[RMDB]
RNA sequence: GGGAACGACUCGAGUAGAGUCGAAAAAGAAUGAGAGAAUCUCGUUAAAUACUUUCAAAACUUAUAGUUGCAAACGACGACAACUACGCUUUAGCGGCUUAAUUCCCGCUUUCGCUUACCUAGAUUUGUCUGUGGGUUUACCGUAAGCGACAUUAACCCAGCAUUAUCACUUCGGUGAUAAUGCUGGAAAAGAAACAACAACAACAAC
Reactivity to 2A3 in 0.01 (KOAc 150mM, MgCl2 10mM, bicine 150mM(pH8.5), 24C), signal-to-noise 2, nucleotides 027 to 156: a000g080a020a010u050g010a020g000a000g070a240a060u070c040u010c110g020u040u040a060a170a120u130a180c060u100u140u130c040a070a100a080a040c020u080u090a100u010a160g000u000u000g000c030a090a040a090c110g050a010c070g020a030c040a020a010c050u080a080c070g000c030u050u060u120a010g000c010g050g000c050u050u070a070a000u180u100c010c000c000g000c000u000u040u030c010g000c000u050u040a060c010c010u060a070g020a200u120u070u060g130u110c050u060g020u100g060g000g000u080u130u000a000c000c000g000u010a010a010g000c000g010a010c010a060u090u140a030a030c000
This 207-nucleotide RNA was probed chemically with 2A3. For 2A3, 663 sequencing reads were counted.